[RMDB]
RNA sequence: GGGAACGACUCGAGUAGAGUCGAAAAAAAUUAUGGUCGCGGGCACGUAUGUGCACACCGAGAAUGACACUCUUUCGCCGUCAACCGUGUCGGUAGUCUUGCACAUCAGGAAUCCGUCUGCGUUGAAGAAUUGCUUUACAUUCGUGUAAAGCAAUUCAAAAGAAACAACAACAACAAC
Reactivity to 2A3 in 0.01 (KOAc 150mM, MgCl2 10mM, bicine 150mM(pH8.5), 24C), signal-to-noise 5, nucleotides 027 to 126: a000a000a000u300u130a140u130g090g000u050c020g010c030g020g010g000c010a010c080g100u220a030u100g010u000g020c010a000c000a010c020c030g010a020g070a120a100u130g010a020c020a010c030u140c020u080u210u170c130g040c100c040g020u010c010a050a080c070c040g120u060g060u120c000g000g020u070a110g020u020c050u060u050g000c030a010c000a040u030c020a030g100g130a110a120u060c030c040g050u010c040u040g020c030g070u040u100g050a060a070
Reactivity to DMS in 0.01 (KOAc 150mM, MgCl2 10mM, bicine 150mM(pH8.5), 24C), signal-to-noise 6, nucleotides 027 to 126: a070a070a070u020u000a090u010g020g010u000c030g010c030g020g000g020c010a110c130g000u010a030u000g020u000g010c000a050c160a100c030c020g000a070g000a120a100u000g000a080c060a080c080u000c120u000u000u000c120g010c100c070g000u000c040a060a070c130c110g000u000g000u000c000g000g000u000a070g020u000c170u000u000g010c030a020c030a020u000c050a120g010g010a080a090u000c070c060g010u000c020u000g000c040g020u000u010g010a110a110

Structure probing data (2A3 and DMS) for a 177-nucleotide construct. It was measured as part of the RMDB library M2PK90. For 2A3, 4,832 sequencing reads were counted. The DMS profile rests on 6,555 reads. The RNA was probed in 150 mM KOAc, 10 mM MgCl2 and 150 mM bicine (pH 8.5) at 24 C.